[RMDB]
RNA sequence: GGGAACGACUCGAGUAGAGUCGAAAACAAAACUGACCAACUAUGAGGUCAUACAUCGUCAUAGGAAAACAAAACAAAACUGACCAGUUAUGAGGUCAUACAUCGUCAUAGCAAACAAAACAACAAAGACGAUGGAGGGAUUCGUCCCUCCAUCGUCAAAAGAAACAACAACAACAAC
Reactivity to 2A3 in 0.01 (KOAc 150mM, MgCl2 10mM, bicine 150mM(pH8.5), 24C), signal-to-noise 1, nucleotides 027 to 126: c000a000a090a000a040c170u110g000a000c000c000a040a040c000u000a010u030g000a000g000g000u000c000a030u170a180c000a090u000c010g080u000c000a000u030a080g190g000a210a000a000a260c220a000a050a000a000c100a000a220a000a000c090u000g000a000c000c000a040g060u000u000a000u000g000a000g000g000u000c030a000u140a050c090a090u110c030g090u050c000a000u000a000g100c000a000a150a000c050a000a140a000a000c080a030a030c000a000a130a000